[RMDB]
Structure probing data (2A3 and DMS) for a 177-nucleotide construct. For 2A3, 3,323 sequencing reads were counted. The RNA was probed in 150 mM KOAc, 10 mM MgCl2 and 150 mM bicine (pH 8.5) at 24 C. For DMS the reverse transcriptase was MarathonRT.

RNA sequence: GGGAACGACUCGAGUAGAGUCGAAAACACCCAAUUGCCACUCCUUUGAUCCCGCGACACUACUAGAAGCCUAAAGUUCGCGGUUGGCCCUACUAAUCGGCAUCGCACCCCGCCGGACCUCCCCCCACAAUCCACAUCUCUUCGGAGAUGUGGAUUGAAAAGAAACAACAACAACAAC
Reactivity to 2A3 in 0.01 (KOAc 150mM, MgCl2 10mM, bicine 150mM(pH8.5), 24C), signal-to-noise 4, nucleotides 027 to 126: c090a050c000c010c030a020a060u100u110g020c000c010a030c030u060c010c050u080u050u100g050a060u120c010c000c000g000c010g020a010c030a010c100u130a020c010u050a070g050a170a060g080c010c030u060a070a050a020g040u020u030c010g010c000g020g000u000u100g030g010c000c000c000u080a070c020u040a070a120u080c030g030g020c010a020u050c010g000c020a040c000c000c010c000g040c010c000g000g030a050c000c000u000c020c000c000c000c000c010a030
Reactivity to DMS in 0.01 (KOAc 150mM, MgCl2 10mM, bicine 150mM(pH8.5), 24C), signal-to-noise 2, nucleotides 027 to 126: c230a100c000c000c000a110a140u010u030g010c040c040a040c020u020c020c010u030u000u050g010a040u000c120c010c000g000c040g020a050c220a010c030u000a080c090u000a050g000a190a100g000c070c030u000a040a040a080g020u010u010c030g000c060g000g000u000u010g000g040c020c030c020u010a090c090u000a100a050u000c090g000g020c010a040u000c010g010c010a020c030c030c020c070g010c040c000g020g000a080c040c000u000c030c000c000c000c020c030a210